RNA sequence: GGGAACGACUCGAGUAGAGUCGAAAACUGUUCCAUAAAAGUGAACAACCGCCUCAUACCUUUAUCUCAGGCUCUGCUACUGGAUUUUAUGGAGAUUUAGGUUUUACAAAAAAAUACGAUGAACAAACUAGCACUCUAAAUUCGUUUAGAGUGCUAGAAAAGAAACAACAACAACAAC
Reactivity to 2A3 in 0.01 (KOAc 150mM, MgCl2 10mM, bicine 150mM(pH8.5), 24C), signal-to-noise 1, nucleotides 027 to 126: c010u000g000u000u000c030c000a000u080a130a300a050a010g120u140g010a000a000c020a010a050c030c030g120c050c020u090c020a050u090a150c010c000u010u040u010a020u020c030u000c040a020g020g090c040u030c050u240g110c020u080a240c050u130g020g070a120u040u060u020u190a120u180g090g000a030g070a060u060u000u000a000g000g000u010u010u020u070a030c050a000a090a030a000a030a000a050u100a080c110g060a180u200g070a080a000c010a010a140a000
Reactivity to DMS in 0.01 (KOAc 150mM, MgCl2 10mM, bicine 150mM(pH8.5), 24C), signal-to-noise 2, nucleotides 027 to 126: c090u000g000u000u000c010c040a070u010a120a100a120a150g020u010g040a100a040c060a100a150c030c110g010c030c030u000c200a100u000a050c040c000u020u010u010a020u000c020u010c020a070g000g000c080u000c100u000g010c100u000a090c170u010g000g000a110u000u000u000u000a130u010g020g010a070g040a040u000u000u000a040g010g000u020u010u000u010a080c110a010a020a040a130a080a040a110u000a020c140g010a100u000g000a140a060c100a070a060a170
Source: RMDB library OK2TRN, as collected in RNAgym.
An RNA of 177 nucleotides, treated with 2A3 and DMS and read out base by base.
The reactions ran in a buffer of 150 mM KOAc, 10 mM MgCl2 and 150 mM bicine (pH 8.5), at 24 C.
For DMS, 1,028 sequencing reads were counted.
Values cover nucleotides 27 to 126.